[RMDB]
RNA sequence: GGGAACGACUCGAGUAGAGUCGAAAAAAAGGAUGAUUCACCGUUCAGCAAUAACAUUUCCGUGUGCAAUGCUAUGUUUGAUGCCGGAUACCUGGUUAUCAUCCUAACGGGUCGGAGUGAUGAAGUUGAGGCAGAAACGCGAGCAUGGUUAGCUGAAGCUUGACACUCCAUUCGUGGAGUGUCAAGCAAAAGAAACAACAACAACAAC
Reactivity to 2A3 in 0.01 (KOAc 150mM, MgCl2 10mM, bicine 150mM(pH8.5), 24C), signal-to-noise 2, nucleotides 027 to 156: a000a000a000g000g010a000u080g000a010u000u140c140a040c040c050g010u110u080c050a020g040c010a050a050u120a120a050c010a040u000u120u110c010c010g200u220g020u060g180c120a080a060u060g010c020u110a010u180g230u000u050u000g110a090u080g000c040c020g060g000a040u050a130c060c090u080g030g000u010u040a030u030c000a000u010c000c000u010a030a000c000g150g010g030u060c040g010g010a070g010u110g010a090u110g070a010a000g050u120u140g030a000g000g000c010a020g110a030a070a000c090g020c080g040a040g020c020a060u090g050g070u090u050a060g050c080u070g030a020a040
The record gives the reactivity of an RNA of 207 nucleotides to 2A3.
It was measured as part of the RMDB library OK3TST.
The reactions ran in a buffer of 150 mM KOAc, 10 mM MgCl2 and 150 mM bicine (pH 8.5), at 24 C.
Values cover nucleotides 27 to 156.